[RMDB]
RNA sequence: GGGAACGACUCGAGUAGAGUCGAAAAGAUAUGGACCAAAUAAGGUGCUUUCCGACGAAGUUAGAGCAAUUCGGAAACGAAUUGCUCUAACAGAGGAAAGAACUACACCAAAUUUGGUCCUAAGUCAUCUGUAAUUUAACUUCGGUUAAAUUACAGAAAAAGAAACAACAACAACAAC
Reactivity to DMS in 0.01 (KOAc 150mM, MgCl2 10mM, bicine 150mM(pH8.5), 24C), signal-to-noise 4, nucleotides 027 to 126: g010a020u010a120u000g000g020a000c010c000a000a020a010u010a070a300g000g000u000g020c000u000u000u010c000c010g000a240c300g000a150a140g000u000u000a000g000a020g020c000a010a000u000u010c010g010g010a050a020a040c010g010a010a000u000u000g000c000u010c010u010a000a000c000a070g010a270g000g000a000a020a010g000a080a020c130u040a300c010a000c000c010a020a300a050u000u000u000g010g000u000c000c000u000a000a030g000u000c030a160
Reactivity to 2A3 in 0.01 (KOAc 150mM, MgCl2 10mM, bicine 150mM(pH8.5), 24C), signal-to-noise 2, nucleotides 027 to 126: g000a010u050a010u080g000g000a000c000c000a000a000a030u050a060a050g000g000u010g040c020u000u010u000c010c010g040a130c230g300a300a150g010u000u000a010g010a000g000c000a010a010u010u000c010g020g000a030a000a030c000g020a010a000u010u000g000c000u000c000u000a000a020c000a000g010a000g000g000a000a000a010g000a040a010c180u240a050c050a010c000c010a030a110a050u000u000u000g020g000u000c000c000u010a010a000g010u000c000a060